[RMDB]
RNA sequence: GGGAACGACUCGAGUAGAGUCGAAAAAGUGCUUGAGACUGACAUUGCAUCCUUUGACAAGAGUGAGGACGAUGCGAUGGCGCUAACAGCGCUGAUGAUUUUGGAAGAUCUAGGCGUCGACCAGGAAAUGCUCAUGCUGAUUCGUCAGCAUGAGCAUAAAAGAAACAACAACAACAAC
Reactivity to 2A3 in 0.01 (KOAc 150mM, MgCl2 10mM, bicine 150mM(pH8.5), 24C), signal-to-noise 3, nucleotides 027 to 126: a000g010u020g000c020u040u090g040a030g030a140c030u070g040a020c030a060u040u030g000c020a040u020c000c000u070u060u150g150a100c130a200a090g080a080g150u140g040a020g030g030a020c040g020a010u020g000c020g050a060u050g010g030c010g000c010u020a100a020c030a050g020c030g000c010u020g000a040u160g000a010u020u080u050u150g150g070a060a050g000a000u000c010u010a050g000g030c020g000u030c010g010a030c020c000a020g090g040a090a200
Reactivity to DMS in 0.01 (KOAc 150mM, MgCl2 10mM, bicine 150mM(pH8.5), 24C), signal-to-noise 3, nucleotides 027 to 126: a100g010u000g010c040u000u010g000a190g020a100c060u010g020a140c030a050u000u000g010c020a070u010c010c070u000u000u010g020a140c140a130a110g000a090g000u020g020a120g030g000a100c100g000a030u000g010c010g010a100u000g000g000c010g010c050u000a040a090c150a140g000c000g000c010u000g000a090u000g000a040u000u000u000u030g000g000a220a150g000a020u000c010u000a230g000g000c050g030u000c040g030a180c040c010a090g000g020a050a130